The record gives the reactivity of an RNA of 177 nucleotides to 2A3. 2A3 is a SHAPE reagent: it acylates the 2'-hydroxyl of flexible nucleotides of all four kinds. Conditions: 150 mM KOAc, 10 mM MgCl2 and 150 mM bicine (pH 8.5), 24 C. For 2A3, 353 sequencing reads were counted. Reactivities are given for positions 27 through 126.
RNA sequence: GGGAACGACUCGAGUAGAGUCGAAAAUUCAUUCUCUCAAUUGUUCUUUUUAUUUGAGGAAAUUUGAUUGUAUUGCAUAUACAACUAUGCGAUGCACUUUGUUCAUUUUAACUUUGGAUAUAUGUGCGCCUUCUUUGUACUUCGGUACAAAGAAGGCAAAAGAAACAACAACAACAAC
Reactivity to 2A3 in 0.01 (KOAc 150mM, MgCl2 10mM, bicine 150mM(pH8.5), 24C), signal-to-noise 1, nucleotides 027 to 126: u140u120c030a010u050u000c050u000c060u000c040a000a040u000u090g100u110u140c030u020u030u270u040u030a290u010u040u160g000a000g080g000a050a040a050u000u000u000g060a170u020u030g000u100a000u000u000g060c000a000u020a000u000a100c070a230a040c040u000a010u000g000c040g040a000u120g000c000a000c040u000u150u100g050u000u000c010a140u030u010u020u150a070a000c060u000u000u090g040g000a000u000a000u000a000u020g300u060g020c090